[RMDB]
RNA sequence: GGGAACGACUCGAGUAGAGUCGAAAAGGGGUCCGAUUCUUGGACCCUGCCAAAGCUAUGAAGUACACUGAAGCCUCCACGGUGUAUGGAGCUUUGGACAGGCUAGAAUCGGACGGAGGCACCCAAACCUACUCGCUCGUUCGCGAGCGAGUAGGAACAAGGAAUGUACGUUCGCGUACAUUCCUUGAAAAGAAACAACAACAACAAC
Reactivity to 2A3 in 0.01 (KOAc 150mM, MgCl2 10mM, bicine 150mM(pH8.5), 24C), signal-to-noise 1, nucleotides 027 to 156: g050g030g060g020u000c000c000g000a010u020u000c020u170u300g160g070a150c040c000c000u010g010c000c010a010a010a010g010c020u070a220u300g000a010a000g010u010a010c010a010c010u020g030a180a020g030c000c000u000c000c000a000c000g000g000u000g000u000a000u010g010g000a000g010c000u000u000u000g030g030a130c010a000g030g030c050u070a020g000a000a000u000c000g000g000a000c000g000g000a000g000g000c010a030c000c010c000a040a060a100c000c000u000a000c000u010c010g010c000u020c000g030u070u100c300g030c010g150a000g000c000g000a000g000u000a000g000g000a000a030
An RNA of 207 nucleotides, treated with 2A3 and read out base by base. For 2A3 the reverse transcriptase was SuperScript II with manganese. It was measured as part of the RMDB library RNAMAK.